[RMDB]
RNA sequence: GGGAACGACUCGAGUAGAGUCGAAAAGGGGUCUAUGGAGAGAUGACCACGUAUUUGACAUGUGCCUGAAGCCUCCACGGGCACAACAGCAAAUAUAUCAAUCUCGAUGAAAUAGACGGAGGCACCCAAAACCAAUCCCUCUUCGGAGGGAUUGGAAUCAUUGACUAUUGUUCGCAAUAGUCAAUGAAAAAGAAACAACAACAACAAC
Reactivity to 2A3 in 0.01 (KOAc 150mM, MgCl2 10mM, bicine 150mM(pH8.5), 24C), signal-to-noise 7, nucleotides 027 to 156: g020g010g060g010u000c010u010a010u030g020g000a020g000a010g010a030u040g050a060c070c090a110c270g030u050a080u020u020u030g160a180c090a080u030g010u000g000c010c000u050g050a110a020g000c010c000u000c000c000a010c000g000g000g010c030a000c000a020a030c040a020g220c000a010a040a000u050a010u020a020u140c070a200a130u010c020u010c020g270a300u040g020a020a030a020u020a010g010a010c010g000g000a010g010g000c000a010c000c000c000a040a090a010a040c000c000a000a000u000c000c000c000u000c000u030u020c210g110g010a000g000g000g000a000u000u000g000g000a000a020
Reactivity to DMS in 0.01 (KOAc 150mM, MgCl2 10mM, bicine 150mM(pH8.5), 24C), signal-to-noise 2, nucleotides 027 to 156: g020g040g050g010u000c020u000a020u010g010g000a170g010a030g010a090u000g000a180c150c120a050c080g030u000a010u010u000u020g000a080c030a300u010g000u010g000c000c000u000g000a070a150g000c050c010u000c020c050a280c040g010g000g000c010a020c010a010a020c110a230g000c030a040a030a030u000a030u000a080u000c030a090a070u000c000u010c020g010a190u010g010a100a100a070u000a020g020a050c000g010g030a060g150g040c020a070c030c020c010a040a050a110a180c010c000a000a010u000c000c000c010u000c000u000u010c300g030g020a030g010g000g010a000u000u000g010g000a020a040

This 207-nucleotide RNA was probed chemically with 2A3 and DMS. The reactions ran in a buffer of 150 mM KOAc, 10 mM MgCl2 and 150 mM bicine (pH 8.5), at 24 C. It was measured as part of the RMDB library RNAMAK. The DMS profile rests on 3,785 reads. For DMS the reverse transcriptase was MarathonRT. The 2A3 profile rests on 10,055 reads.